RNA sequence: GGGAACGACUCGAGUAGAGUCGAAAAGGGGUCUUACGUGGGCUGUGACAUGCUCCGUACUGAAGCCUCCACGGUACCGGGAGCAACAGCACAGCCGUAACAUCGUAAGACGGAGGCACCCAAAACCAGAUUCGAACGUUCGCGUUCGAAUCUGGAAGGGUGCAUCAAGGUUCGCCUUGAUGCACCCAAAAGAAACAACAACAACAAC
Reactivity to 2A3 in 0.01 (KOAc 150mM, MgCl2 10mM, bicine 150mM(pH8.5), 24C), signal-to-noise 2, nucleotides 027 to 156: g140g010g030g000u010c000u000u000a000c000g010u020g020g020g010c010u000g020u000g050a170c100a190u030g010c010u000c000c000g000u000a000c000u030g020a100a030g000c000c000u010c000c000a050c010g010g000u020a020c060c180g120g060g010a020g000c050a060a170c100a160g060c000a020c000a000g020c000c000g010u000a000a000c020a110u190c010g010u010a000a010g000a000c010g000g000a000g000g000c000a030c000c000c020a020a080a020a070c000c000a000g000a000u010u000c000g010a010a000c010g050u130u140c300g000c000g150u010u010c000g010a000a000u000c000u000g000g000a000a020